[RMDB]
Conditions: 150 mM KOAc, 10 mM MgCl2 and 150 mM bicine (pH 8.5), 24 C. Chemical mapping of a 177-nucleotide RNA with 2A3 and DMS. It was measured as part of the RMDB library OK2TST.
RNA sequence: GGGAACGACUCGAGUAGAGUCGAAAAUCGAGCCAUGUAUAGAAUAUGACCCUGUCACCAAUCUAAGUAUGUUCUUAAAGGACAAGGCAAUCGCACAUCCGAGAGAUAACUGGCUUGCCUCAUUUAGCAGAAGUUAGUUCUUCGGAACUAACUUCUGAAAAGAAACAACAACAACAAC
Reactivity to 2A3 in 0.01 (KOAc 150mM, MgCl2 10mM, bicine 150mM(pH8.5), 24C), signal-to-noise 3, nucleotides 027 to 126: u120c020g000a000g000c000c030a050u160g130u060a150u090a090g130a120a040u150a140u200g080a160c020c070c030u080g000u030c010a060c100c030a040a080u070c010u030a050a040g110u090a120u210g090u040u040c010u030u120a160a120a050g020g010a010c020a010a010g000g020c000a010a150u150c090g010c020a020c010a070u000c000c010g090a060g000a000g000a110u070a040a030c020u020g030g000c000u000u040g060c000c010u050c020a100u080u150u210a050g040
Reactivity to DMS in 0.01 (KOAc 150mM, MgCl2 10mM, bicine 150mM(pH8.5), 24C), signal-to-noise 2, nucleotides 027 to 126: u020c060g030a070g010c000c000a010u020g040u010a120u010a070g010a100a100u000a110u010g000a060c000c070c100u010g030u000c070a090c080c150a050a110u010c030u010a010a090g030u000a120u010g010u000u000c020u000u010a030a110a080g000g000a020c010a050a080g010g000c030a050a050u000c170g000c080a060c030a070u000c020c050g000a150g020a140g010a040u010a040a130c090u000g000g000c040u000u000g010c070c010u000c140a070u000u010u020a110g000

DMS (dimethyl sulfate) methylates the pairing face of unpaired adenines and cytosines.